[RMDB]
RNA sequence: GGGAACGACUCGAGUAGAGUCGAAAAGCUCAGCACCCAGGACAGUGCCGGGCGCACCGCGCGGGCCUCGCUGGAUAUAGGGUCAGUGUAUAAAUCUGGAGCGGAACGUCAGGCGCCGACCCUCGUGGGUUAACCUACGAUUCGUCGUAGGUUAACCAAAAGAAACAACAACAACAAC
Reactivity to DMS in 0.01 (KOAc 150mM, MgCl2 10mM, bicine 150mM(pH8.5), 24C), signal-to-noise 2, nucleotides 027 to 126: g010c020u010c020a110g010c040a130c010c060c060a160g020g020a150c100a060g020u000g050c040c070g020g020g010c020g000c230a070c020c030g010c040g050c090g020g010g000c080c010u000c060g020c020u000g000g000a050u010a130u050a130g010g010g020u000c010a030g000u000g010u000a220u020a050a050a060u000c020u000g020g030a300g000c070g030g020a070a110c060g010u000c060a040g010g000c080g010c050c060g010a100c020c000c010u000c170g000u010g030
Reactivity to 2A3 in 0.01 (KOAc 150mM, MgCl2 10mM, bicine 150mM(pH8.5), 24C), signal-to-noise 2, nucleotides 027 to 126: g030c010u050c100a030g030c070a040c050c030c020a020g080g020a010c000a050g010u040g020c010c010g050g050g000c010g000c000a030c020c000g000c000g000c030g000g020g020c000c000u060c040g010c040u030g070g020a060u100a020u120a300g290g030g010u050c030a020g020u010g040u040a090u050a200a140a020u010c030u020g060g010a060g020c020g030g030a030a010c000g030u020c020a020g030g000c020g010c000c000g040a050c000c020c000u020c050g070u160g050